An RNA of 177 nucleotides, treated with 2A3 and DMS and read out base by base. 2A3 is a SHAPE reagent: it acylates the 2'-hydroxyl of flexible nucleotides of all four kinds. Values are in units of 0.01, from 0 to 300, in steps of 10. 2A3 adducts were read by reverse transcription with SuperScript II with manganese. The data come from the RNA Mapping Database (RMDB), library OK1LIB. The 2A3 profile rests on 1,036 reads.
[RMDB]
RNA sequence: GGGAACGACUCGAGUAGAGUCGAAAAUUAUGGAACGUUCUGCCCCGUAUGUUCUGAGUCGCCUUCUUGCAAGUCCUUAUCUGGUGGAAAUUCGAUGGGUUACAGCCUUGCGGCUCGACGGCAACUACAACCAGAAGAGCUUCGGCUCUUCUGGUUGAAAAGAAACAACAACAACAAC
Reactivity to 2A3 in 0.01 (KOAc 150mM, MgCl2 10mM, bicine 150mM(pH8.5), 24C), signal-to-noise 2, nucleotides 027 to 126: u210u120a190u250g090g000a020a030c020g060u180u070c140u190g040c050c000c070c000g000u030a070u130g050u050u060c140u020g070a060g010u030c000g080c020c000u030u030c030u040u080g000c020a070a010g040u040c040c000u250u140a200u250c020u080g100g000u060g010g080a090a110a040u080u180c050g020a050u150g030g000g010u020u090a020c000a000g000c040c000u030u050g000c000g010g000c000u000c000g070a070c060g000g050c000a010a030c000u060a010
Reactivity to DMS in 0.01 (KOAc 150mM, MgCl2 10mM, bicine 150mM(pH8.5), 24C), signal-to-noise 1, nucleotides 027 to 126: u000u060a080u010g030g000a000a070c060g000u050u000c040u010g000c000c000c030c040g000u020a130u000g030u020u040c060u030g000a020g010u040c090g000c050c110u000u000c000u000u000g000c120a010a040g000u000c070c060u030u030a020u000c120u080g010g000u000g000g000a020a030a030u000u080c040g000a030u030g000g000g000u000u000a090c150a150g000c020c040u000u000g040c130g000g040c040u000c050g000a040c150g000g000c070a100a080c120u000a120